[RMDB]
RNA sequence: GGGAACGACUCGAGUAGAGUCGAAAAAUCCUCGCUUAUAAGCCGGGGGACUAGCCUUUGCUGAGUUCACUAGUAAAACGCGAGGAAAAUUAUAGAGACAUCCAGACACCGAUUAUGUUGUGAUAUACAUGUAAAAAAAGUUCGCUUUUUUUACAUGAAAAGAAACAACAACAACAAC
Reactivity to 2A3 in 0.01 (KOAc 150mM, MgCl2 10mM, bicine 150mM(pH8.5), 24C), signal-to-noise 6, nucleotides 027 to 126: a010u000c000c000u000c000g000c010u200u130a070u040a200a050g030c020c000g040g000g000g000g010a010c010u000a020g010c020c090u150u120u300g000c010u080g100a010g000u010u020c010a020c070u010a010g030u080a000a030a100a070c040g000c000g000a000g010g010a080a000a000a010u070u040a040u030a020g070a000g020a030c030a070u020c020c010a030g050a040c040a050c050c040g080a100u090u120a110u270g000u000u010g020u010g030a010u000a000u010a120
Reactivity to DMS in 0.01 (KOAc 150mM, MgCl2 10mM, bicine 150mM(pH8.5), 24C), signal-to-noise 4, nucleotides 027 to 126: a090u000c000c000u000c020g020c000u000u010a080u010a070a260g020c040c020g000g000g020g000g000a000c020u000a050g000c010c300u020u010u020g020c010u000g010a030g010u010u000c010a080c000u000a070g000u000a050a090a130a160c300g000c020g000a020g020g000a020a020a030a050u030u030a040u030a090g010a100g000a080c080a060u010c030c050a100g000a090c040a070c060c060g000a090u020u040a060u000g010u000u000g010u000g000a120u000a060u010a170